[RMDB]
Overview: The data come from the RNA Mapping Database (RMDB), library OK2TRN. Chemical mapping of a 177-nucleotide RNA with DMS and 2A3. Reactivities are given for positions 27 through 126. For DMS the reverse transcriptase was MarathonRT. The reactions ran in a buffer of 150 mM KOAc, 10 mM MgCl2 and 150 mM bicine (pH 8.5), at 24 C.
RNA sequence: GGGAACGACUCGAGUAGAGUCGAAAACGUGAGCGUCGCGCUCGGCUUCAUCAGCGCGAGCUCGGCCGCGCCGAUCGUGUGAUGACUUUGCGCCGAGUACGGCAGCACGAGCACGACGUGAUCGGCAAUCCUGGGGUGGAUUCGUCCACCCCAGGAUAAAAGAAACAACAACAACAAC
Reactivity to DMS in 0.01 (KOAc 150mM, MgCl2 10mM, bicine 150mM(pH8.5), 24C), signal-to-noise 3, nucleotides 027 to 126: c060g030u010g000a300g000c020g000u000c010g010c060g000c000u000c040g020g030c080u000u000c110a020u000c070a050g030c020g020c030g000a110g010c180u000c030g000g020c010c220g010c280g010c000c020g000a040u000c010g020u000g040u000g010a060u000g000a030c150u000u000u010g030c100g020c000c000g010a250g020u010a090c020g010g000c010a050g010c010a040c060g000a020g030c010a010c010g000a020c020g020u000g000a080u000c010g000g000c150a140
Reactivity to 2A3 in 0.01 (KOAc 150mM, MgCl2 10mM, bicine 150mM(pH8.5), 24C), signal-to-noise 2, nucleotides 027 to 126: c010g010u050g020a010g020c030g030u030c000g020c000g000c020u020c030g040g000c040u070u050c020a130u020c010a060g170c020g030c010g090a050g050c070u010c000g000g030c050c090g090c090g000c020c000g020a090u020c010g030u020g020u010g060a080u040g010a050c050u080u180u270g000c040g010c000c010g010a100g260u190a180c030g040g020c040a040g000c050a050c100g000a000g010c010a010c010g060a020c010g020u020g010a010u010c000g010g010c030a010